RNA sequence: GGGAACGACUCGAGUAGAGUCGAAAACGGAAGCUCGUCUCGCUGCUUAAUUGCGGUGUGACACUUCACAUUAAGCCCUAGAGGGUCGCACUUCUAGGCGGGGUUCGGAGGUACCUGGCAACAGAAACCUCCACUUGCUGCGCAAGCAGCUAUGACAUCAAAUAUGACAGUUCGCUGUCAUAUUUGAAAAAGAAACAACAACAACAAC
Reactivity to 2A3 in 0.01 (KOAc 150mM, MgCl2 10mM, bicine 150mM(pH8.5), 24C), signal-to-noise 8, nucleotides 027 to 156: c050g020g020a000a000g020c120u150c240g050u010c020u020c020g010c010u010g000c010u080u130a110a100u300u100g000c000g000g000u020g010u020g010a000c010a020c010u010u020c010a010c000a020u100u170a180a300g300c000c000c000u000a010g000a000g030g040g020u190c070g030c070a070c030u010u010c000u000a000g010g000c000g010g000g000g000u020u100c060g000g000a000g000g000u000a010c000c000u030g260g000c000a020a020c000a020g000a000a000a000c000c000u000c000c000a000c000u000u040g000c000u010g000c010g000c050a090a080g000c010a000g000c000u040a130u100g080a030c010a070
Reactivity to DMS in 0.01 (KOAc 150mM, MgCl2 10mM, bicine 150mM(pH8.5), 24C), signal-to-noise 1, nucleotides 027 to 156: c030g030g010a080a020g000c030u010c090g040u010c000u000c040g000c000u000g000c000u000u010a080a180u010u000g030c050g070g000u000g000u030g020a060c020a040c020u000u000c010a120c080a130u000u010a040a080g000c100c000c000u010a040g020a070g000g000g000u010c240g000c250a260c010u000u000c020u000a020g010g000c030g010g020g020g020u010u000c070g000g020a020g020g050u000a010c030c020u000g040g000c020a140a300c040a050g000a020a030a020c020c010u020c000c000a010c000u000u000g000c000u000g010c020g020c140a210a200g000c030a070g000c020u000a020u000g010a250c040a180